[RMDB]
Conditions: 150 mM KOAc, 10 mM MgCl2 and 150 mM bicine (pH 8.5), 24 C.
The record gives the reactivity of an RNA of 177 nucleotides to DMS and 2A3.
For 2A3 the reverse transcriptase was SuperScript II with manganese.
Reactivities are given for positions 27 through 126.
The 2A3 profile rests on 39,211 reads.
The DMS profile rests on 24,135 reads.

RNA sequence: GGGAACGACUCGAGUAGAGUCGAAAAGCACGUCCGGAAAGUCCCGUGCGAACACUUGAGCUCCGGCUUGCCCGCUCUUGUGGAUUAGGACGUUCUAGCUCCGGCUUGGCCGCUAGUUCGUCCGAAACCGUGAUACUAUAUUCGUAUAGUAUCACGGAAAAGAAACAACAACAACAAC
Reactivity to DMS in 0.01 (KOAc 150mM, MgCl2 10mM, bicine 150mM(pH8.5), 24C), signal-to-noise 7, nucleotides 027 to 126: g000c050a020c040g000u020c030c020g030g010a070a160a150g010u020c030c040c020g020u010g010c060g020a110a080c030a020c020u000u000g000a030g020c020u010c200c170g000g010c060u020u010g010c050c020c070g000c020u000c010u000u010g010u010g010g000a140u010u020a080g000g000a010c010g010u000u000c000u000a010g000c030u030c110c030g010g010c080u050u020g020g010c190c140g000c000u010a010g010u000u000c010g010u000c000c000g000a030a070a150
Reactivity to 2A3 in 0.01 (KOAc 150mM, MgCl2 10mM, bicine 150mM(pH8.5), 24C), signal-to-noise 9, nucleotides 027 to 126: g020c010a000c030g040u050c060c010g030g060a150a080a030g130u120c020c010c010g010u030g010c030g050a110a020c030a010c030u040u070g010a010g010c020u070c100c040g030g000c030u070u150g050c020c000c010g000c000u020c000u020u040g020u030g040g030a060u060u190a050g000g000a000c000g000u000u000c000u000a010g000c040u060c090c040g150g030c140u140u290g150g010c030c020g000c010u000a000g000u000u000c000g000u000c000c000g000a010a000a000